[RMDB]
RNA sequence: GGGAACGACUCGAGUAGAGUCGAAAAAGAAAGAGCGUAUUCGCGUCUUGACGUGAAUGAGCCUAGACUGUAGGCUCUAGUGGGAAAGUAACGCUCACUCCCAAAACGCUAUUCCACAGUCAGUUAAUAGUAUUACAGGAUUCGUCCUGUAAUACUAAAAAGAAACAACAACAACAAC
Reactivity to DMS in 0.01 (KOAc 150mM, MgCl2 10mM, bicine 150mM(pH8.5), 24C), signal-to-noise 9, nucleotides 027 to 126: a080g010a090a090a090g000a020g010c000g020u000a080u000u000c010g020c000g010u000c070u000u010g010a020c010g030u000g000a020a020u000g010a010g010c000c000u000a080g010a090c110u000g020u000a030g000g000c000u000c030u000a040g010u000g000g010g000a050a070a080g010u010a070a050c050g000c010u000c020a120c150u000c000c000c010a050a050a060a080c130g000c040u000a100u010u000c040c030a020c030a120g000u010c070a080g010u000u000a080a140
Reactivity to 2A3 in 0.01 (KOAc 150mM, MgCl2 10mM, bicine 150mM(pH8.5), 24C), signal-to-noise 9, nucleotides 027 to 126: a010g150a020a050a010g030a000g000c010g010u030a040u020u030c000g010c010g020u010c070u120u190g090a010c000g010u010g010a030a030u050g000a010g000c000c010u070a100g070a260c090u100g080u140a000g010g000c000u000c010u010a040g030u050g020g020g030a030a110a080g030u040a050a010c020g010c020u010c010a020c020u020c000c000c000a020a040a000a010c060g000c020u040a060u070u050c030c010a020c000a030g080u100c020a020g010u100u120a070a070
Conditions: 150 mM KOAc, 10 mM MgCl2 and 150 mM bicine (pH 8.5), 24 C. An RNA of 177 nucleotides, treated with DMS and 2A3 and read out base by base. Values cover nucleotides 27 to 126. For 2A3 the reverse transcriptase was SuperScript II with manganese.